[RMDB]
RNA sequence: GGGAACGACUCGAGUAGAGUCGAAAAAUACAUGCUUUUCAAGCAAGGGGUUAACAUCCCUAACAACGUCAUUCAUUAUUAUAACUCUCGCUACCACAGCGCGGCGUACGCAGAAACGGCCCCCGCGUUCCAAAGCGCAGCCCGCGGCGGCGGCGGCCCCUUACAUCGUUUUCGAACGAUGUAAGGGAAAAGAAACAACAACAACAAC
Reactivity to 2A3 in 0.01 (KOAc 150mM, MgCl2 10mM, bicine 150mM(pH8.5), 24C), signal-to-noise 2, nucleotides 027 to 156: a000u100a030c080a040u040g000c000u120u140u010u170c170a050a030g030c050a050a040g030g000g000g020u040u030a030a000c000a090u070c030c040c030u050a100a060c090a030a070c060g110u160c130a160u100u090c100a010u010u260a060u060u160a120u080a160a070c010u080c020u060c140g000c030u020a050c010c010a030c030a070g020c020g020c120g000g000c020g010u030a080c050g000c010a040g050a150a030a000c020g170g010c060c000c000c030c050g110c020g030u020u020c030c020a020a070a060g000c010g030c060a020g010c000c010c020g050c010g000g020c000g000g000c000g000g000c020g030g000c000